[RMDB]
RNA sequence: GGGAACGACUCGAGUAGAGUCGAAAAGACCGCCACGGCUCCGACGAUGCCGGACACCACCAAGUCGCCGAUCACGGUGGCGCCGACCGUCAAGCCGUCCGUCCCGGACGACACGGUCACCACGCCACGUAUGGUAUGGUUUCGACCAUACCAUACGAAAAGAAACAACAACAACAAC
Reactivity to 2A3 in 0.01 (KOAc 150mM, MgCl2 10mM, bicine 150mM(pH8.5), 24C), signal-to-noise 7, nucleotides 027 to 126: g020a020c000c030g040c080c040a060c040g020g000c010u050c110c030g030a030c020g040a050u140g080c070c000g020g010a040c030a030c020c000a020c000c010a050a040g040u060c030g050c180c060g040a060u140c060a030c190g040g000u010g000g000c010g010c010c020g010a010c000c000g000u030c050a040a020g010c010c000g010u010c000c000g040u050c040c020c010g010g000a020c020g020a010c000a000c050g010g010u020c000a000c020c030a030c030g070c030c020a060
Reactivity to DMS in 0.01 (KOAc 150mM, MgCl2 10mM, bicine 150mM(pH8.5), 24C), signal-to-noise 9, nucleotides 027 to 126: g000a130c060c030g010c060c060a120c050g000g000c030u000c090c060g010a060c060g000a110u000g020c040c020g010g010a100c070a080c050c030a050c050c060a110a190g010u000c060g020c070c030g000a070u010c090a090c190g000g020u000g000g000c020g000c090c060g000a010c010c000g010u010c180a130a070g020c020c000g000u000c020c010g000u000c030c040c030g000g000a030c020g000a040c050a090c010g000g000u000c010a080c070c150a080c030g000c030c040a100